The record gives the reactivity of an RNA of 177 nucleotides to 2A3 and DMS. For 2A3, 54,201 sequencing reads were counted.
[RMDB]
RNA sequence: GGGAACGACUCGAGUAGAGUCGAAAAUUCCCAAAGAAGAAAUGACCACUUGUAUCUUAGGUGUGCAGUAGUUAUACAGCAUAUCAGGAUAAAGUUAAGCCUAACGGACAGGCGGGUCGGUUGCCGGCGAGAUGUUGGAGUUCGCUCCAGCAUCUCGAAAAGAAACAACAACAACAAC
Reactivity to 2A3 in 0.01 (KOAc 150mM, MgCl2 10mM, bicine 150mM(pH8.5), 24C), signal-to-noise 9, nucleotides 027 to 126: u030u010c010c000c010a030a040a010g130a040a000g060a010a050a060u190g000a000c010c000a010c010u080u050g270u130a010u000c010u020u030a130g000g000u000g000u000g000c020a020g010u060a000g010u040u160a180u060a300c040a010g000c000a000u010a000u020c000a000g020g000a010u010a010a010a000g020u050u200a080a010g000c000c000u040a100a010c000g010g010a010c010a000g000g000c000g010g000g000u000c000g000g010u110u120g010c000c000g010g020
Reactivity to DMS in 0.01 (KOAc 150mM, MgCl2 10mM, bicine 150mM(pH8.5), 24C), signal-to-noise 6, nucleotides 027 to 126: u000u010c000c000c010a070a070a130g010a120a080g030a060a080a050u040g010a020c020c010a160c000u000u000g020u010a010u010c000u000u000a110g010g010u000g020u000g010c000a090g030u000a020g020u040u100a100u000a020c010a070g010c010a000u000a000u000c000a060g000g000a020u010a000a010a010g020u010u040a110a100g010c000c000u000a120a170c020g010g010a030c020a130g010g010c000g000g010g000u000c010g000g010u030u020g000c010c000g000g010

For 2A3 the reverse transcriptase was SuperScript II with manganese.